[RMDB]
RNA sequence: GGGAACGACUCGAGUAGAGUCGAAAAGUACAUUCGCAGAUGGGGGAAAAAAGUGUACCUGUCAGCUUGGAAGCCAGAGGGAGACAAAGGGAUAAAAGCAAACCCUGUCCAGGUGCGGUGGCUCAUGCUUGUAAUCCCAGCACUUUGGGAGGCCCAACUAUGCUGAAAAUUUCGAUUUUCAGCAUAGAAAAGAAACAACAACAACAAC
Reactivity to DMS in 0.01 (KOAc 150mM, MgCl2 10mM, bicine 150mM(pH8.5), 24C), signal-to-noise 2, nucleotides 027 to 156: g000u000a060c030a050u020u000c050g010c070a130g010a140u000g010g010g060g060g010a000a040a070a100a030a090g020u010g010u000a050c040c020u000g020u000c030a110g030c040u010u070g020g020a150a060g000c040c030a050g030a130g010g010g000a100g030a080c070a060a080a060g000g030g000a210u000a030a060a040a080g010c020a030a060a090c020c000c000u000g000u010c020c060a120g030g000u000g030c080g010g030u000g020g000c010u000c050a100u000g000c030u000u000g030u020a130a140u000c000c000c010a090g000c080a070c060u000u000u010g010g010g000a100g000g000c010c000c020a030a300
Reactivity to 2A3 in 0.01 (KOAc 150mM, MgCl2 10mM, bicine 150mM(pH8.5), 24C), signal-to-noise 2, nucleotides 027 to 156: g010u020a000c020a060u010u180c060g030c050a020g040a130u090g010g000g030g020g100a060a070a000a020a020a060g060u070g000u050a070c000c000u040g050u050c020a010g030c030u040u070g030g020a080a040g030c000c000a020g010a030g100g040g000a090g000a030c080a050a070a010g000g000g030a010u080a090a070a000a000g000c030a010a030a140c000c000c030u020g010u020c030c040a060g000g030u070g060c000g020g030u080g010g000c010u050c070a020u080g010c040u040u070g070u170a080a040u040c000c000c000a000g020c030a030c030u090u170u030g010g000g040a030g030g000c000c000c000a010a020
The data come from the RNA Mapping Database (RMDB), library OK3TST.
The record gives the reactivity of an RNA of 207 nucleotides to DMS and 2A3.
Reactivities are given for positions 27 through 156.
For 2A3, 1,368 sequencing reads were counted.
The DMS profile rests on 4,880 reads.